[RMDB]
RNA sequence: GGGAACGACUCGAGUAGAGUCGAAAAGCACGUCGUUACGACGACGUGCAAGAAAACAAAAGGAGUGGCGACGGGUGGCCACAGUGAAUCAAACACCCGAAAAGCAUGGUGGUACGCCACCAUGCAAAUGCUGGGCUGGAUUCGUCCAGCCCAGCAUAAAAGAAACAACAACAACAAC
Reactivity to 2A3 in 0.01 (KOAc 150mM, MgCl2 10mM, bicine 150mM(pH8.5), 24C), signal-to-noise 1, nucleotides 027 to 126: g010c000a000c000g000u000c000g000u000u000a140c300g000a000c000g000a000c000g140u030g030c000a000a000g000a000a020a000a000c190a050a080a110a070g290g000a070g020u000g000g000c010g000a090c000g000g000g000u030g030g000c020c040a000c000a000g040u070g040a000a000u120c080a100a000a040c000a000c000c050c000g000a020a020a000a000g010c000a000u000g000g000u000g070g000u040a000c230g100c000c000a000c010c000a000u040g000c000a010a010
Structure probing data (2A3) for a 177-nucleotide construct.
Reactivities are given for positions 27 through 126.
For 2A3, 738 sequencing reads were counted.
Reactivities are rounded to 0.1 and cut off at 0 and 3.
2A3 adducts were read by reverse transcription with SuperScript II with manganese.